RNA sequence: GGGAACGACUCGAGUAGAGUCGAAAAUCUGUGAUCAUCAGAAUUUCAAUUAUUAAUUUUUAACUAGAAGCAUGGGAUGAUUAUAAAUGCCAUUAAGACAUUGAAUUGUGUCUAAUGUUGGGUUAAUAGAAGGCAAUAUUUGCUAGGAUCGCUCCUACCCUAAUAGUAGCUUCGGCUACUAUUAGGGAAAAGAAACAACAACAACAAC
Reactivity to 2A3 in 0.01 (KOAc 150mM, MgCl2 10mM, bicine 150mM(pH8.5), 24C), signal-to-noise 1, nucleotides 027 to 156: u020c050u040g060u050g030a060u090c000a020u020c000a020g130a080a090u050u250u060c060a070a040u130u110a130u090u120a210a180u210u090u040u190u300a080a020c020u050a010g020a220a000g160c000a000u020g000g000g090a000u050g050a020u060u120a060u050a100a120a000u060g000c030c000a000u020u030a050a000g000a000c000a010u020u020g110a170a100u160u080g080u000g020u000c010u040a000a050u030g050u030u190g000g000g000u020u020a090a000u040a110g160a230a020g000g000c050a020a000u100a130u270u060u040g000c000u050a020g000g010a050u080c000g020c000u060c010c000u050a120